[RMDB]
RNA sequence: GGGAACGACUCGAGUAGAGUCGAAAACACAACUGCGAAGGGGGGACGGAGAAGGCUAUCUUGGCCGGGCGACGGUUGUCCCGGUUUAAGCGUGUAGGCUGGUUUUCCAGGCAAAUCCGGAAUUGAACCCUAUUCACAACUUCGGUUGUGAAUAGGGAAAAGAAACAACAACAACAAC
Reactivity to DMS in 0.01 (KOAc 150mM, MgCl2 10mM, bicine 150mM(pH8.5), 24C), signal-to-noise 2, nucleotides 027 to 126: c030a060c140a090a030c080u000g000c060g000a110a120g020g000g000g010g020g000a070c090g020g030a030g000a080a100g040g000c030u010a060u010c030u000u010g000g010c010c030g000g000g000c300g000a080c090g040g010u000u010g010u020c000c000c000g000g000u000u000u030a020a050g000c300g020u010g010u000a050g000g020c010u000g010g000u000u000u010u020c000c030a080g000g010c030a030a100a090u010c030c010g000g000a070a080u000u010g000a100a110
An RNA of 177 nucleotides, treated with DMS and read out base by base. The reactions ran in a buffer of 150 mM KOAc, 10 mM MgCl2 and 150 mM bicine (pH 8.5), at 24 C. The DMS profile rests on 1,114 reads. It was measured as part of the RMDB library M2PK90.